Chemical mapping of a 177-nucleotide RNA with 2A3 and DMS. For DMS the reverse transcriptase was MarathonRT.

RNA sequence: GGGAACGACUCGAGUAGAGUCGAAAAUGUUCUGAGCUUAACGUCUGUUUUAACUGAAACGCCGCAUUCUACACUACAACGCUAAGGCGAGGAAAUGUUCAUAGUGUAAGGAGAGCGGGAACUGGAAUAGAGCUAGUGGAUUCGUCCACUAGCUCUAAAAAGAAACAACAACAACAAC
Reactivity to 2A3 in 0.01 (KOAc 150mM, MgCl2 10mM, bicine 150mM(pH8.5), 24C), signal-to-noise 2, nucleotides 027 to 126: u170g010u080u030c090u060g060a010g070c100u110u030a080a060c060g030u010c110u030g130u030u000u030u060a180a290c150u110g060a130a000a000c080g030c010c000g000c020a030u020u000c000u000a000c000a000c000u060a030c010a140a000c030g020c040u060a130a000g060g010c010g020a000g000g200a070a180a140u090g020u050u000c010a010u040a000g000u000g000u030a160a000g000g000a040g000a000g000c000g000g000g000a010a010c050u100g000g050a030a040
Reactivity to DMS in 0.01 (KOAc 150mM, MgCl2 10mM, bicine 150mM(pH8.5), 24C), signal-to-noise 2, nucleotides 027 to 126: u030g010u000u010c010u050g030a150g030c040u010u000a070a090c090g000u000c130u010g070u030u080u000u000a010a130c130u060g000a060a000a180c170g020c030c010g100c030a050u000u010c000u000a030c020a000c010u000a000c300a070a120c030g030c010u000a080a040g010g000c000g000a110g000g040a010a190a070u000g020u000u000c170a190u000a000g000u020g000u000a000a030g000g000a010g000a120g000c030g000g000g000a060a070c110u020g000g010a180a240
The RNA was probed in 150 mM KOAc, 10 mM MgCl2 and 150 mM bicine (pH 8.5) at 24 C. For 2A3 the reverse transcriptase was SuperScript II with manganese.